[RMDB]
RNA sequence: GGGAACGACUCGAGUAGAGUCGAAAAGAUAUGGAUUCUAUGUCGCUCGGUUGAUGACCUCGGAAACGAGCAAGACCGAGAACUACGACUAAGGAAUCCUAAGUCAAAAUCACGGUUCGCCGUGAAAGACUUGAACGUUGUUCGCAACGUUCAAGUCAAAAGAAACAACAACAACAAC
Reactivity to DMS in 0.01 (KOAc 150mM, MgCl2 10mM, bicine 150mM(pH8.5), 24C), signal-to-noise 1, nucleotides 027 to 126: g000a050u000a300u000g000g000a000u010u000c000u000a300u010g000u000c000g020c000u060c000g010g000u000u000g020a060u000g000a070c300c000u000c000g010g040a040a120a060c000g040a010g000c020a040a070g000a050c010c000g020a020g000a040a000c170u010a300c050g000a000c000u000a030a200g000g020a010a000u000c010c000u010a010a150g010u000c020a120a020a020a210u010c020a000c000g000g000u000u010c170g000c000c000g040u000g000a020a020a140
Reactivity to 2A3 in 0.01 (KOAc 150mM, MgCl2 10mM, bicine 150mM(pH8.5), 24C), signal-to-noise 1, nucleotides 027 to 126: g010a020u100a080u180g000g000a000u000u030c010u010a050u080g010u000c000g020c000u000c010g020g090u030u050g140a300u120g110a260c000c010u000c000g000g030a090a070a040c000g000a010g070c000a020a030g010a000c000c000g000a000g000a020a010c040u250a010c010g020a000c050u080a180a180g070g000a000a010u000c000c000u020a050a010g030u030c020a040a000a010a260u050c000a020c000g060g000u070u050c300g000c130c000g040u010g000a060a020a000